[RMDB]
An RNA of 177 nucleotides, treated with DMS and read out base by base. Source: RMDB library M2PK50, as collected in RNAgym. The DMS profile rests on 1,494 reads. The RNA was probed in 150 mM KOAc, 10 mM MgCl2 and 150 mM bicine (pH 8.5) at 24 C.
RNA sequence: GGGAACGACUCGAGUAGAGUCGAAAAUGGACAUCUUUCGAGAUGUCCAAAAUACCGAGAAUGCGACUCGGUAAAUAAAACGCACCCUUGGUAACAAGGGAAAAAACCAGUUCUUCGGAACUGGUAAUACCAUUGUGCUAUUCGUAGCACAAUGGUAAAAAGAAACAACAACAACAAC
Reactivity to DMS in 0.01 (KOAc 150mM, MgCl2 10mM, bicine 150mM(pH8.5), 24C), signal-to-noise 2, nucleotides 027 to 126: u000g000g000a010c000a030u000c000u010u000u000c160g000a020g000a010u010g000u010c000c000a010a010a080a120u020a200c020c000g020a010g010a050a080u000g010c000g010a110c000u010c000g030g000u000a050a030a080u000a010a000a000a020c010g030c030a040c000c000c010u000u030g000g010u020a100a130c010a000a010g000g020g020a000a010a060a060a030a020c000c000a010g000u000u000c000u000u000c200g030g000a020a010c000u010g010g010u000a010a060